[RMDB]
RNA sequence: GGGAACGACUCGAGUAGAGUCGAAAAACACUCGUUCACACGUACGUGAGAGUGAUCUCGUACGUUCUCGUUCGAACGAUCUCGUACUCGUUCACGAGUACACGAGAACGAGUGAGAGAUCGAUCGUUCACUCGUUCGAUCGAGAGAUCACGUACUCCCUGUGAUAGGGGUUCGCCCCUAUCACAGGAAAAGAAACAACAACAACAAC
Reactivity to 2A3 in 0.01 (KOAc 150mM, MgCl2 10mM, bicine 150mM(pH8.5), 24C), signal-to-noise 6, nucleotides 027 to 156: a000c040a010c020u020c010g220u170u070c040a030c020a020c110g100u160a030c100g000u000g020a030g010a010g040u070g080a090u000c010u010c010g010u060a070c020g010u040u010c020u020c020g020u040u030c020g000a020a010c010g000a040u010c020u010c070g090u090a010c010u010c000g030u090u060c060a060c060g030a070g060u110a050c110a020c080g110a110g000a010a010c020g000a000g010u030g030a030g000a010g000a050u030c080g020a060u020c030g050u060u050c040a050c120u050c050g010u030u000c020g010a070u010c010g000a000g000a010g010a080u080c040a000c010g000u010a010c020u060c010
Reactivity to DMS in 0.01 (KOAc 150mM, MgCl2 10mM, bicine 150mM(pH8.5), 24C), signal-to-noise 1, nucleotides 027 to 156: a140c070a040c040u000c020g000u000u020c020a130c060a130c200g020u020a010c050g030u000g000a060g030a060g030u000g000a060u020c000u000c020g000u000a070c020g000u000u000c000u020c050g010u000u020c000g020a030a080c010g000a030u000c010u010c060g010u000a040c000u010c010g000u010u000c070a110c060g040a160g000u000a020c070a110c070g000a110g040a040a030c000g020a090g050u000g010a020g050a110g020a150u000c010g020a040u000c010g030u000u000c050a110c100u000c000g060u020u010c010g000a060u010c020g020a110g020a170g010a060u000c020a000c010g040u000a070c040u000c030
Description: Chemical mapping of a 207-nucleotide RNA with 2A3 and DMS. DMS adducts were read by reverse transcription with MarathonRT. Values cover nucleotides 27 to 156. Source: RMDB library OK3TST, as collected in RNAgym. For 2A3 the reverse transcriptase was SuperScript II with manganese.